RNA sequence: GGGAACGACUCGAGUAGAGUCGAAAAAAGUGAUUAUUCGUAAUCACUUCACGCCGGGCGCGGUGGCGCGUGCCUGUAGUCCCAGCUACUCCGGAGGCUAAACGACGUACCCGUUCGCGGGUACGAAUUAAUCGAGUGUAUUCGUACACUCGAUUAAAAAAGAAACAACAACAACAAC
Reactivity to 2A3 in 0.01 (KOAc 150mM, MgCl2 10mM, bicine 150mM(pH8.5), 24C), signal-to-noise 3, nucleotides 027 to 126: a000a010g000u010g010a010u010u020a020u080u110c190g060u060a020a000u010c010a010c000u040u020c080a040c050g030c030c000g010g010g020c020g010c000g040g010u020g020g020c030g020c010g020u010g000c000c000u030g030u070a030g040u050c000c000c000a030g010c030u090a070c020u010c040c020g110g000a050g070g000c050u090a100a080a060c070g110a010c010g010u000a000c000c000c000g020u030u050c240g000c000g090g000g000u000a010c010g000a000a000
Reactivity to DMS in 0.01 (KOAc 150mM, MgCl2 10mM, bicine 150mM(pH8.5), 24C), signal-to-noise 5, nucleotides 027 to 126: a020a010g020u000g010a000u000u000a010u000u010c200g020u000a010a000u000c000a000c000u000u000c090a110c150g000c080c030g000g010g000c010g010c020g010g010u000g000g010c050g010c030g020u000g000c020c010u000g000u000a050g000u000c010c010c010a090g010c030u000a070c060u010c040c090g000g000a090g010g010c070u000a040a070a100c130g010a200c020g010u000a010c010c000c000g010u000u010c180g010c010g010g000g000u000a000c000g000a020a050